Notes: Structure probing data (2A3 and DMS) for a 177-nucleotide construct. The data come from the RNA Mapping Database (RMDB), library OK1LIB.
RNA sequence: GGGAACGACUCGAGUAGAGUCGAAAACUAUUUUAAAAGGUUGCACGAACAGAUCCGUCAGAGCGAACGGCAUCGCUUGUUUGACCUCCCGGUCUAUUGCGUGGUCAACAACCGGGCCUAUCAGGAGCGUUGCCGAUAUGUUCGCAUAUCGGCAACGAAAAGAAACAACAACAACAAC
Reactivity to 2A3 in 0.01 (KOAc 150mM, MgCl2 10mM, bicine 150mM(pH8.5), 24C), signal-to-noise 3, nucleotides 027 to 126: c020u090a110u130u240u170u210a100a190a050a020g120g000u070u010g070c050a020c130g010a070a000c010a120g070a080u080c030c050g060u020c040a050g140a060g100c070g050a080a020c010g010g000c010a080u010c000g010c000u010u070g090u020u000u080g020a000c000c000u100c000c000c000g110g000u060c300u140a110u000u100g060c030g130u220g120g030u280c010a000a000c000a020a000c000c000g000g020g000c000c090u190a220u290c070a090g020g060a090g110
Reactivity to DMS in 0.01 (KOAc 150mM, MgCl2 10mM, bicine 150mM(pH8.5), 24C), signal-to-noise 1, nucleotides 027 to 126: c050u070a010u000u050u010u000a010a150a080a060g000g040u000u000g000c080a040c080g000a120a090c040a030g000a030u010c050c030g000u020c080a060g050a000g000c180g000a030a030c100g060g000c000a070u000c070g070c060u020u030g000u060u000u000g000a080c070c180u010c000c090c000g010g030u000c040u040a250u000u000g000c000g030u030g000g000u000c030a020a000c300a050a000c000c090g000g080g030c080c150u000a070u030c100a040g000g000a030g000